RNA sequence: GGGAACGACUCGAGUAGAGUCGAAAAGAUAUGGAUUGUGUACGCGAAGAACGUGGGUUCGGAAACGAACCGUAACAUCGGGAGCGUAACACAAUCCUAAGUCAAAACGCAGCCUUCGGGCUGCGAACGUUGUGAAGAACUUCGGUUCUUCACAACGAAAAGAAACAACAACAACAAC
Reactivity to DMS in 0.01 (KOAc 150mM, MgCl2 10mM, bicine 150mM(pH8.5), 24C), signal-to-noise 2, nucleotides 027 to 126: g000a040u000a300u030g000g000a000u000u020g020u010g000u020a000c000g040c030g040a280a220g000a040a090c120g020u000g000g050g040u000u000c000g000g000a120a000a130c010g010a010a000c000c000g010u020a050a100c080a090u000c030g000g000g020a190g000c000g000u000a030a070c000a010c000a030a000u010c000c000u000a030a040g000u030c020a080a110a140a150c040g000c000a010g000c000c000u000u010c270g010g010g040c000u040g010c010g030a010a030
Reactivity to 2A3 in 0.01 (KOAc 150mM, MgCl2 10mM, bicine 150mM(pH8.5), 24C), signal-to-noise 2, nucleotides 027 to 126: g000a010u000a040u070g000g000a000u000u040g000u000g000u050a010c020g020c000g160a300a160g040a170a030c030g040u080g000g070g010u000u010c030g010g010a000a030a020c000g000a000a000c000c000g040u150a030a030c020a070u300c070g000g050g060a300g060c000g030u060a160a000c000a000c000a000a000u000c000c000u000a040a000g020u000c000a060a010a040a100c010g060c000a000g000c010c030u100u140c300g130g000g000c000u060g000c000g000a020a000
An RNA of 177 nucleotides, treated with DMS and 2A3 and read out base by base. Values are in units of 0.01, from 0 to 300, in steps of 10. For DMS the reverse transcriptase was MarathonRT. For 2A3 the reverse transcriptase was SuperScript II with manganese.